[RMDB]
Source: RMDB library RNAMAK, as collected in RNAgym. Structure probing data (2A3) for a 207-nucleotide construct. The 2A3 profile rests on 2,833 reads. The RNA was probed in 150 mM KOAc, 10 mM MgCl2 and 150 mM bicine (pH 8.5) at 24 C.
RNA sequence: GGGAACGACUCGAGUAGAGUCGAAAAUCCUAAGUCUCCAUCACAGCUCUGUGCCAGAUUCGGGUUUCGGAAACGAAAUCUCUAGCGUGAUCGGUAAUUCAGAGUCACAGUGGAGAUAUGGAAAAUCGACAUUAGGUGCUUCGGCACCUAAUGUCGAGGCAAUAUUAGCGUUCGCGCUAAUAUUGCCAAAAGAAACAACAACAACAAC
Reactivity to 2A3 in 0.01 (KOAc 150mM, MgCl2 10mM, bicine 150mM(pH8.5), 24C), signal-to-noise 3, nucleotides 027 to 156: u000c000c000u010a110a000g030u000c000u000c000c010a060u120c030a060c030a030g010c000u000c000u000g030u040g030c020c050a220g010a030u050u020c040g000g000g030u000u000u000c020g000g050a060a080a060c010g020a030a020a020u030c110u030c090u140a120g100c070g190u150g040a010u010c010g020g010u030a050a120u170u090c000a000g020a030g040u060c000a030c030a030g020u010g010g010a000g000a010u040a040u030g010g060a040a020a010a170u050c000g010a000c000a000u000u000a000g010g000u000g000c000u060u140c240g120g000c000a000c000c000u010a000a000u000g000u000c000g000a000